[RMDB]
RNA sequence: GGGAACGACUCGAGUAGAGUCGAAAAUGGCGAAGGUCCCAGCAGGGAGGUGAGUGCUCUAUGAUUUGAGACUUCUCUAACGAUGAAACAAAAAUGCCUUCGCAAAUGAAUUUAGCCGAAUCGUAGGAUUUAUUGAAUUUUUCGAAAUUCAAUAAAUAAAAGAAACAACAACAACAAC
Reactivity to DMS in 0.01 (KOAc 150mM, MgCl2 10mM, bicine 150mM(pH8.5), 24C), signal-to-noise 8, nucleotides 027 to 126: u030g010g010c010g010a030a010g000g000u010c030c020c000a180g010c170a090g010g010g010a030g000g010u020g010a090g010u030g010c030u010c000u000a050u020g010a110u010u020u000g010a060g000a060c020u000u010c010u000c010u000a100a150c140g000a100u020g010a140a080a110c120a030a060a070a070a090u010g000c000c010u000u000c000g020c000a050a060a070u020g000a080a110u030u020u010a070g010c050c020g000a050a070u010c030g010u010a080g010g010
Reactivity to 2A3 in 0.01 (KOAc 150mM, MgCl2 10mM, bicine 150mM(pH8.5), 24C), signal-to-noise 9, nucleotides 027 to 126: u150g120g000c010g000a000a000g010g010u030c010c010c000a010g040c050a010g020g040g010a020g010g040u210g080a070g020u270g120c000u000c000u030a120u150g220a190u160u120u120g030a030g000a010c000u040u000c010u000c000u050a090a030c050g090a090u160g100a070a100a040c080a030a100a060a030a040u120g020c000c000u010u000c000g000c010a020a020a040u120g020a020a070u080u200u210a040g030c030c020g030a040a060u050c050g040u070a040g010g070

Chemical mapping of a 177-nucleotide RNA with DMS and 2A3. The RNA was probed in 150 mM KOAc, 10 mM MgCl2 and 150 mM bicine (pH 8.5) at 24 C. The data come from the RNA Mapping Database (RMDB), libraries RFM100 and RFMREP. For DMS the reverse transcriptase was MarathonRT.